[RMDB]
RNA sequence: GGGAACGACUCGAGUAGAGUCGAAAAGUGCCUCGUCGGCCCGGCAUGCCAACCUGAUGCGAAGUUCAAGGUGGUUUCUCUGGCCUUCCAGAGAGAUGCGCGUCGGAAGAACCGACGAACAAACCUUAAAACAAAACGACGUUCGCGUCGUUUUGAACGUAAUAAUGAGGUUCGCCUCAUUAUUACGAAAAGAAACAACAACAACAAC
Reactivity to DMS in 0.01 (KOAc 150mM, MgCl2 10mM, bicine 150mM(pH8.5), 24C), signal-to-noise 2, nucleotides 027 to 156: g000u000g010c080c020u000c010g040u010c040g000g030c000c020c020g000g000c040a090u010g020c000c090a060a070c000c010u030g010a050u010g040c020g020a240a250g010u000u000c030a060a050g020g030u000g020g040u000u000u000c000u000c000u000g010g000c250c110u010u000c000c000a060g020a060g010a010g030a060u010g090c020g010c010g040u010c020g020g010a070a130g000a200a120c010c000g010a030c000g020a010a050c050a090a110a110c020c000u010u010a040a050a110a210c030a010a000a000a030c000g010a030c000g050u000u000c290g040c040g000u000c000g020u000u000u000u000g000a090a120
Reactivity to 2A3 in 0.01 (KOAc 150mM, MgCl2 10mM, bicine 150mM(pH8.5), 24C), signal-to-noise 5, nucleotides 027 to 156: g060u040g090c020c020u020c010g010u000c000g010g030c000c010c000g010g000c030a020u130g020c020c030a100a090c050c010u050g040a060u070g050c110g140a150a060g130u110u050c050a050a010g040g010u020g010g000u000u110u010c000u010c000u000g020g010c020c050u210u160c020c000a010g000a000g000a000g000a030u130g060c040g020c030g040u010c010g000g020a100a060g020a100a070c010c000g000a000c000g010a030a010c030a020a070a040c020c020u170u270a050a070a050a040c000a000a000a000a000c010g010a000c000g000u030u070c230g000c000g080u020c000g010u000u000u000u000g000a010a000

The data come from the RNA Mapping Database (RMDB), library M2RFPK. The record gives the reactivity of an RNA of 207 nucleotides to DMS and 2A3. For 2A3 the reverse transcriptase was SuperScript II with manganese.